Conditions: 150 mM KOAc, 10 mM MgCl2 and 150 mM bicine (pH 8.5), 24 C. This 177-nucleotide RNA was probed chemically with DMS and 2A3. For DMS the reverse transcriptase was MarathonRT.
[RMDB]
RNA sequence: GGGAACGACUCGAGUAGAGUCGAAAACUAAAACGCAAGAAUCCGCAACGUGCAUUGGGGCUACUGAGCAACGCGGCGGAUGAGCAGCUGGCCUUUGGCAGGGCGCUCAAGGAGUAUGCGUCCACGGCGUCCCUAAUUGAUUCGUCAAUUAGGGACGAAAAGAAACAACAACAACAAC
Reactivity to DMS in 0.01 (KOAc 150mM, MgCl2 10mM, bicine 150mM(pH8.5), 24C), signal-to-noise 4, nucleotides 027 to 126: c050u010a040a050a080a060c060g010c020a070a100g010a230a100u000c010c020g000c010a060a050c030g000u000g000c050a210u000u000g000g010g000g030c160u010a110c040u000g000a070g020c050a070a040c030g020c300g000g010c020g000g010a020u000g000a030g010c000a080g020c020u000g000g000c010c020u000u000u000g040g010c030a020g000g010g000c020g010c010u000c040a090a100g000g000a070g020u010a080u000g000c000g020u020c000c060a130c240g010g000
Reactivity to 2A3 in 0.01 (KOAc 150mM, MgCl2 10mM, bicine 150mM(pH8.5), 24C), signal-to-noise 2, nucleotides 027 to 126: c010u060a040a020a000a070c050g040c020a000a060g060a190a080u000c010c000g020c030a010a020c030g020u020g000c070a300u050u090g030g000g050g100c040u230a110c030u130g030a040g010c030a060a100c030g000c020g000g000c000g000g000a020u030g000a020g020c030a000g040c010u040g050g010c010c010u150u100u270g050g000c060a060g000g000g020c010g010c010u010c040a050a060g100g040a020g030u110a080u170g020c010g000u000c000c000a060c040g070g000